This 177-nucleotide RNA was probed chemically with DMS and 2A3. The data come from the RNA Mapping Database (RMDB), library OK2TRN. The DMS profile rests on 2,629 reads. Conditions: 150 mM KOAc, 10 mM MgCl2 and 150 mM bicine (pH 8.5), 24 C.

RNA sequence: GGGAACGACUCGAGUAGAGUCGAAAAAUUUUGAACACCACAAUUUGCCUAGCAAAUGGCAUGGUGAUUAGAAAGAAUGUUGGUAACAAUAGCGGGCAGCCGAGUACUGUUGUUGACAACACACUCGCUUACUCCCAAUGUUCGCAUUGGGAGUAAGAAAAGAAACAACAACAACAAC
Reactivity to DMS in 0.01 (KOAc 150mM, MgCl2 10mM, bicine 150mM(pH8.5), 24C), signal-to-noise 3, nucleotides 027 to 126: a110u000u000u000u000g010a140a070c010a000c000c000a050c110a120a130u000u000u000g010c010c090u000a170g000c110a050a040a040u010g000g050c120a110u000g020g020u000g010a050u000u000a140g000a020a020a050g020a150a050u000g000u000u010g000g010u000a030a030c020a030a030u010a060g010c030g000g000g000c210a080g010c050c030g000a220g030u010a130c070u010g000u000u000g000u000u000g000a060c060a060a020c030a020c180a050c080u000c090g000
Reactivity to 2A3 in 0.01 (KOAc 150mM, MgCl2 10mM, bicine 150mM(pH8.5), 24C), signal-to-noise 2, nucleotides 027 to 126: a010u080u070u030u080g030a010a010c010a010c000c000a010c080a080a070u030u000u090g010c010c050u110a100g030c060a090a070a070u080g020g060c040a010u010g000g000u000g030a110u090u090a060g080a010a030a000g040a080a060u060g000u020u000g070g020u020a050a000c010a020a000u000a030g010c000g000g030g010c090a040g150c030c000g000a000g030u060a110c040u010g000u020u010g000u000u020g040a020c000a010a000c000a000c000a010c030u050c020g040